RNA sequence: GGGAACGACUCGAGUAGAGUCGAAAACGAGCCCGCGGACGCGGUCUACCUGCUUUACCUGACCGGGCACGCUCCGUCCACUUCGCCGGCCCGACUCCUCGUCGAGUACGAGGACGGUGGCAGGGCGCAUGAGGACGAAGUUCGCUUCGUCCUCAUGAAAAGAAACAACAACAACAAC
Reactivity to 2A3 in 0.01 (KOAc 150mM, MgCl2 10mM, bicine 150mM(pH8.5), 24C), signal-to-noise 7, nucleotides 027 to 126: c020g010a020g070c020c010c020g000c030g030g030a040c070g010c030g040g020u040c060u060a110c020c020u080g040c060u170u180u130a110c030c020u050g070a090c040c020g010g010g030c070a030c080g030c020u020c020c010g030u040c030c010a080c070u130u110c030g010c010c000g030g000c000c000c000g030a030c010u000c010c010u010c000g010u020c030g080a080g080u110a020c000g000a010g020g000a000c010g000g020u180g050g000c020a060g120g000g000c010g010
Reactivity to DMS in 0.01 (KOAc 150mM, MgCl2 10mM, bicine 150mM(pH8.5), 24C), signal-to-noise 8, nucleotides 027 to 126: c100g000a120g020c030c020c020g030c080g000g000a070c140g030c120g010g010u000c100u010a100c080c030u000g010c100u000u000u010a100c130c080u010g000a080c130c030g000g000g010c040a110c130g010c020u000c100c030g000u010c020c030a100c150u000u000c030g020c010c000g000g000c000c000c000g010a070c300u000c010c010u000c020g020u000c020g010a150g020u010a010c010g000a010g010g010a010c010g000g010u010g030g020c010a050g010g010g010c010g010